[RMDB]
RNA sequence: GGGAACGACUCGAGUAGAGUCGAAAAUGUUCCGGAUUCGUCCGGAACAAAAUAUGGCACCGGUACUCGUCGAUACAAUGCCACGGAGAUGGACCGCGUGAAAAACCACUUAGUUCGCUAAGUGGAACUAGUGAAGGUAGUUCGCUACCUUCACUAGAAAAGAAACAACAACAACAAC
Reactivity to DMS in 0.01 (KOAc 150mM, MgCl2 10mM, bicine 150mM(pH8.5), 24C), signal-to-noise 6, nucleotides 027 to 126: u000g000u010u000c000c000g010g000a040u000u010c210g010u000c000c000g010g010a010a000c000a010a020a070a100u010a070u000g010g010c010a020c020c020g010g020u000a030c040u000c030g020u010c050g000a160u010a060c190a070a080u010g010c090c120a060c030g010g010a120g010a050u000g010g000a030c020c020g010c200g000u000g000a050a050a080a130a140c000c000a000c000u000u000a000g000u000u010c250g020c010u000a010a010g000u010g000g000a020a070
Reactivity to 2A3 in 0.01 (KOAc 150mM, MgCl2 10mM, bicine 150mM(pH8.5), 24C), signal-to-noise 5, nucleotides 027 to 126: u050g000u000u000c000c000g000g000a040u050u060c180g070u000c000c000g010g000a010a000c000a000a010a000a000u160a050u040g120g010c010a010c020c010g030g000u040a060c040u040c100g060u020c010g020a030u060a230c080a190a170u190g070c050c010a020c030g060g010a090g000a040u050g010g020a020c030c000g010c100g030u030g040a060a020a010a020a020c000c000a000c000u000u000a000g010u050u050c220g000c140u000a000a010g010u000g000g000a000a030

Annotation:
Chemical mapping of a 177-nucleotide RNA with DMS and 2A3. The data come from the RNA Mapping Database (RMDB), library M2PK50. DMS adducts were read by reverse transcription with MarathonRT. The DMS profile rests on 7,894 reads.